An RNA of 207 nucleotides, treated with DMS and 2A3 and read out base by base. 2A3 adducts were read by reverse transcription with SuperScript II with manganese. Conditions: 150 mM KOAc, 10 mM MgCl2 and 150 mM bicine (pH 8.5), 24 C. The DMS profile rests on 1,676 reads.
[RMDB]
RNA sequence: GGGAACGACUCGAGUAGAGUCGAAAACAAGUCUUGGACCAAAUUUAAACCCAAGGGGUGGUUUGAAUUAUAUAAUCCCACUUUCAUUUGGCAUCAAUAGUUCAGCUGAUAUGCAUAUGGCUACAUACAGGCAGUGAGUUAAAUGGCAUGGUUAACAUAUGCUGGUAAUGUUCGCAUUACCAGCAUAAAAAGAAACAACAACAACAAC
Reactivity to DMS in 0.01 (KOAc 150mM, MgCl2 10mM, bicine 150mM(pH8.5), 24C), signal-to-noise 1, nucleotides 027 to 156: c020a130a070g010u000c010u000u000g040g010a140c000c030a090a040a150u000u000u000a030a050a120c050c070c040a120a020g020g010g000g090u010g010g020u010u000u010g010a010a010u010u000a120u020a150u000a090a120u000c000c010c010a080c100u000u000u000c060a190u010u000u000g020g020c010a040u010c040a050a160u000a080g020u000u000c040a110g060c040u010g030a090u000a030u000g000c020a100u000a090u000g010g020c010u010a070c020a020u000a010c030a190g000g000c000a080g030u010g000a090g050u010u000a060a030a110u000g000g020c050a090u000g050g000u000u000a060a100c070a190
Reactivity to 2A3 in 0.01 (KOAc 150mM, MgCl2 10mM, bicine 150mM(pH8.5), 24C), signal-to-noise 2, nucleotides 027 to 156: c040a050a030g040u020c050u220u220g030g030a080c010c030a010a050a120u000u020u070a080a090a060c050c030c050a090a110g060g020g020g000u020g030g000u050u090u080g030a040a000u220u000a060u090a020u010a260a030u010c000c010c010a020c000u060u130u130c060a080u050u010u080g030g000c020a040u020c050a060a140u080a110g060u050u030c000a060g030c060u030g040a050u040a060u280g000c020a030u090a040u090g060g010c000u040a060c050a060u120a040c020a030g120g000c020a010g050u030g120a040g030u000u050a050a080a120u060g000g020c030a030u040g020g010u060u080a000a040c020a050